[RMDB]
RNA sequence: GGGAACGACUCGAGUAGAGUCGAAAACAGAUCCAAAUUACGUUCACGACCUCGAUGAUGUUCGCCCGGAGCUGUUCACACAGAUCCUCGUGGACGGAGAAACUGAGUUCGUACCGGAUUUGAGGAACCGUGGCUAUACAUUCGUGUAUAGCCACGGAAAAGAAACAACAACAACAAC
Reactivity to DMS in 0.01 (KOAc 150mM, MgCl2 10mM, bicine 150mM(pH8.5), 24C), signal-to-noise 2, nucleotides 027 to 126: c020a020g020a120u000c010c000a000a100a080u000u020a010c040g000u010u010c040a000c060g000a010c050c020u000c000g020a070u070g000a300u080g000u000u000c070g010c040c030c290g000g010a020g070c000u000g010u000u080c270a130c080a060c000a040g000a000u000c000c000u000c300g000u000g050g010a000c000g000g000a250g000a130a070a020c110u020g000a020g000u000u000c000g040u010a030c250c010g020g000a010u000u000u000g000a120g040g000a130a170
Reactivity to 2A3 in 0.01 (KOAc 150mM, MgCl2 10mM, bicine 150mM(pH8.5), 24C), signal-to-noise 3, nucleotides 027 to 126: c040a020g040a050u030c010c000a020a010a000u080u080a150c020g010u020u060c100a000c020g010a020c000c020u020c020g080a110u080g020a040u090g070u000u010c010g010c020c070c000g050g000a040g000c010u040g010u180u230c070a030c010a000c000a110g020a040u030c000c010u050c040g040u080g000g020a060c030g060g010a120g060a010a100a020c110u100g000a000g010u010u020c000g000u000a050c030c010g000g010a050u000u000u070g120a200g010g050a050a010
About this RNA
Source: RMDB library OK1LIB, as collected in RNAgym. This 177-nucleotide RNA was probed chemically with DMS and 2A3. The reactions ran in a buffer of 150 mM KOAc, 10 mM MgCl2 and 150 mM bicine (pH 8.5), at 24 C. For DMS the reverse transcriptase was MarathonRT.